An RNA of 207 nucleotides, treated with 2A3 and DMS and read out base by base.
It was measured as part of the RMDB library OK3TST.
Values cover nucleotides 27 to 156.
[RMDB]
RNA sequence: GGGAACGACUCGAGUAGAGUCGAAAAUAGUUGUUACGGCUGGUUACCAUUUUAAACAAUUAGGUUUAGUGUGGAAUAAAGAUGUUAACGUUAGCAACCAGAAAUUGUCCAUGAAUGACCUUUUACGAUUUGUCACAGACCCUGCUCUGCUAGUGGCUCAGUUGAAAUAGUUCGCUAUUUCAACUGAAAAAGAAACAACAACAACAAC
Reactivity to 2A3 in 0.01 (KOAc 150mM, MgCl2 10mM, bicine 150mM(pH8.5), 24C), signal-to-noise 3, nucleotides 027 to 156: u110a020g010u010u010g000u010u030a020c050g040g000c050u030g050g070u050u090a060c010c010a040u040u100u020u130a090a050a020c040a090a050u220u160a180g000g120u050u020u010a040g010u060g010u050g020g060a070a040u180a080a170a060g070a070u110g060u100u090a100a000c020g010u020u020a010g020c020a020a050c050c020a040g060a030a110a050u140u190g010u000c020c010a020u040g050a100a150u060g010a070c020c010u030u140u130u140a040c070g050a080u030u050u200g030u020c010a010c000a050g010a040c010c000c000u010g010c010u010c010u000g050c000u020a060g030u040g050g010c030
Reactivity to DMS in 0.01 (KOAc 150mM, MgCl2 10mM, bicine 150mM(pH8.5), 24C), signal-to-noise 3, nucleotides 027 to 156: u000a090g020u000u000g010u000u000a080c060g000g010c010u000g040g010u000u010a150c010c000a070u000u020u010u000a030a070a050c040a120a150u020u010a120g010g010u000u000u000a070g020u000g030u000g010g010a070a100u000a050a080a120g000a120u000g010u000u010a070a070c050g000u010u000a070g020c020a060a070c040c010a120g010a070a050a100u010u000g010u000c030c040a090u000g010a120a100u000g010a040c010c020u000u000u000u000a110c100g010a070u000u000u010g020u000c040a040c060a090g000a060c050c110c020u000g010c030u000c040u000g000c010u000a040g030u010g010g000c090